[RMDB]
RNA sequence: GGGAACGACUCGAGUAGAGUCGAAAAGAUAUGGAAUUAGAGGAGCGAAGAACUCACAGCUAUCGGAAACGAUAGUCACAGGGGAGCUCCGAUUGAUUCCUAAGUCAAAGCGAUCUUCGGAUCGCAAGAUCACAGACAACUUCGGUUGUCUGUGAUCAAAAGAAACAACAACAACAAC
Reactivity to 2A3 in 0.01 (KOAc 150mM, MgCl2 10mM, bicine 150mM(pH8.5), 24C), signal-to-noise 1, nucleotides 027 to 126: g030a010u120a020u130g010g020a000a010u010u010a040g080a200g130g010a030g000c030g090a300a030g090a300a160c030u040c070a060c050a050g000c010u000a000u000c010g000g060a100a020a110c010g000a010u010a000g050u030c010a010c110a080g110g040g000g040a120g030c030u000c040c000g000a000u020u060g000a010u020u090c000c000u010a100a010g000u060c040a060a110a000g000c020g000a000u040c010u060u080c300g230g010a010u000c010g000c000a000a020
Reactivity to DMS in 0.01 (KOAc 150mM, MgCl2 10mM, bicine 150mM(pH8.5), 24C), signal-to-noise 2, nucleotides 027 to 126: g010a030u020a300u000g000g030a000a010u000u000a010g000a300g050g000a000g000c010g010a160a090g030a030a200c040u010c030a180c300a300g010c000u000a000u010c000g000g000a120a090a140c000g000a010u000a000g000u000c070a040c220a090g000g020g000g010a190g000c000u000c010c000g050a110u010u000g020a000u000u000c000c010u000a090a060g000u000c000a070a070a060g000c000g000a010u000c000u000u040c300g030g020a000u030c000g000c000a000a020